[RMDB]
RNA sequence: GGGAACGACUCGAGUAGAGUCGAAAAGGAUCCUAAGUAGUCUGGGUAACUGCCUCGAGAUCAGUUACCAGUGAGGACUACUCAAUUUGUCAUAGAUCUCGAGGAUGACGGGUUGAGAAUAGGAUCGCUACACCUAAGUAUUCGUACUUAGGUGUAGAAAAGAAACAACAACAACAAC
Reactivity to DMS in 0.01 (KOAc 150mM, MgCl2 10mM, bicine 150mM(pH8.5), 24C), signal-to-noise 9, nucleotides 027 to 126: g000g000a010u000c000c000u000a030a170g020u000a010g010u000c000u000g010g000g010u000a010a010c000u000g000c130c040u000c250g010a140g010a130u000c010a020g000u000u000a010c010c010a140g010u010g020a150g000g000a020c010u000a060c000u000c010a000a000u000u000u000g000u000c000a020u000a040g000a080u000c040u000c050g000a090g000g010a020u000g000a010c000g000g000g010u000u000g000a040g000a100a130u000a010g010g000a020u000c010g000
Reactivity to 2A3 in 0.01 (KOAc 150mM, MgCl2 10mM, bicine 150mM(pH8.5), 24C), signal-to-noise 7, nucleotides 027 to 126: g030g000a000u010c000c000u020a040a010g040u000a000g000u000c030u070g140g000g000u000a000a000c000u000g000c000c020u050c090g150a120g000a130u070c010a000g000u000u000a010c000c000a000g050u040g080a080g010g010a010c000u010a010c000u010c000a000a010u010u000u010g010u000c000a000u000a030g090a110u020c030u020c070g040a060g080g040a010u010g000a000c000g010g000g000u000u010g020a020g040a070a060u030a020g000g000a000u000c000g000